[RMDB]
RNA sequence: GGGAACGACUCGAGUAGAGUCGAAAAAGGUCCUUACCGUCGCUGACCUUUUGGCGUCGGAUCCGAUCGGCCCCAUCGAGGUCGGCGAGGACGACCUGGCGUUGAUGCAGCUGACGUCCGGAUCUACAAAGGAUGAUACUUUCGAGUAUCAUCCUUUAAAAGAAACAACAACAACAAC
Reactivity to 2A3 in 0.01 (KOAc 150mM, MgCl2 10mM, bicine 150mM(pH8.5), 24C), signal-to-noise 2, nucleotides 027 to 126: a000g040g010u010c000c010u040u110a140c030c030g200u050c010g000c000u020g050a070c000c000u040u030u010u030g000g010c020g000u000c010g030g050a080u100c070c060g140a180u100c000g000g000c010c010c000c000a090u100c130g030a030g000g000u000c000g000g010c000g000a030g010g010a020c020g040a030c010c020u010g010g000c000g020u020u060g070a110u140g030c050a050g010c050u090g010a010c000g010u010c000c010g030g010a070u000c020u050a040c110
Reactivity to DMS in 0.01 (KOAc 150mM, MgCl2 10mM, bicine 150mM(pH8.5), 24C), signal-to-noise 9, nucleotides 027 to 126: a040g010g010u000c000c060u010u010a170c090c030g010u010c010g010c010u000g000a020c040c020u000u000u000u000g010g010c300g020u000c000g010g010a060u010c190c190g000a280u010c010g010g000c010c050c020c030a040u000c210g000a020g000g010u010c010g000g010c030g010a070g010g000a110c200g000a050c010c010u000g010g000c030g020u000u000g010a100u010g010c070a060g000c050u000g010a060c040g000u000c040c080g010g000a080u000c030u000a080c240